[RMDB]
RNA sequence: GGGAACGACUCGAGUAGAGUCGAAAAUGUCCCAGUUUCGACUGGGACAAAAGCAUGACGAGGAUCAAAGAUCAAAGCCGUCGCUCAUGCGUAAAGACGGCAAAAGGCUAGUGUUCGCACUAGCCAAGGAUGCAGGUAGUUUCGACUACCUGCAUCCAAAAGAAACAACAACAACAAC
Reactivity to DMS in 0.01 (KOAc 150mM, MgCl2 10mM, bicine 150mM(pH8.5), 24C), signal-to-noise 1, nucleotides 027 to 126: u000g030u010c000c000c000a000g000u000u000u000c150g060a000c000u000g030g080g000a030c040a000a000a040a120g010c000a000u000g000a080c160g010a170g010g010a020u000c070a100a100a070g020a080u010c090a050a110a190g000c000c000g020u000c000g010c170u000c020a020u000g000c050g000u010a060a030a100g000a070c000g000g010c020a060a080a080a030g000g050c000u000a000g010u000g000u000u020c240g000c000a000c000u000a000g000c000c000a010a020
Reactivity to 2A3 in 0.01 (KOAc 150mM, MgCl2 10mM, bicine 150mM(pH8.5), 24C), signal-to-noise 1, nucleotides 027 to 126: u040g000u000c010c000c000a000g010u070u070u040c230g120a020c020u020g000g010g000a010c000a010a020a000a000g020c000a010u020g010a050c080g150a120g050g020a040u040c070a110a300a060g090a050u050c040a000a100a040g000c000c000g040u020c020g030c010u050c020a010u060g020c000g000u000a050a000a000g040a020c020g030g000c000a080a080a030a000g010g000c010u000a010g000u010g010u070u060c170g050c060a000c000u040a000g000c000c000a000a010